RNA sequence: GGGAACGACUCGAGUAGAGUCGAAAAAGUUGGACACCAGCGUGAGACGUGCUGGAGACAAAUUGAUAUACUCCGUGGGUCUCUGCGGAGAAUCAUAUACGCACGAAUUUUCUCGUGUGUCCUCCUACCUAACGUCAGCAUAUACGAGGACCAAAUCCGAUAUAUUGUGCUUCGGCACAAUAUAUCGAAAAGAAACAACAACAACAAC
Reactivity to 2A3 in 0.01 (KOAc 150mM, MgCl2 10mM, bicine 150mM(pH8.5), 24C), signal-to-noise 8, nucleotides 027 to 156: a000g040u040u030g010g000a010c020a030c060c030a040g090c050g060u070g020a060g000a010c020g010u020g000c030u070g100g030a040g030a030c110a030a130a040u070u030g020a010u050a010u040a230c000u000c000c000g000u020g000g040g180u150c210u010c010u300g000c000g000g000a000g000a000a000u010c000a000u050a010u030a090c060g000c000a000c020g050a110a080u090u060u090u060c060u020c000g050u060g000u000g000u060c000c000u010c000c000u030a090c000c020u040a130a050c040g040u040c040a050g060c090a100u120a010u040a200c110g040a050g030g050a030c030c050a030a030a080u050c050
Reactivity to DMS in 0.01 (KOAc 150mM, MgCl2 10mM, bicine 150mM(pH8.5), 24C), signal-to-noise 2, nucleotides 027 to 156: a080g050u000u000g000g030a090c040a120c000c040a130g000c000g010u040g020a140g010a130c040g010u000g000c040u000g040g010a140g010a230c070a070a100a130u000u010g020a080u010a060u000a140c010u010c020c000g020u010g000g030g010u010c200u010c020u010g040c010g000g020a040g020a040a030u000c020a050u000a140u000a120c030g000c000a020c010g040a050a240u000u010u010u000c080u010c020g010u010g060u000g000u000c070c000u000c020c010u000a100c040c020u000a050a060c030g020u000c070a070g000c110a080u010a110u000a070c020g010a080g010g000a050c030c020a020a080a140u000c030
Chemical mapping of a 207-nucleotide RNA with 2A3 and DMS. The RNA was probed in 150 mM KOAc, 10 mM MgCl2 and 150 mM bicine (pH 8.5) at 24 C. Source: RMDB library OK3TST, as collected in RNAgym.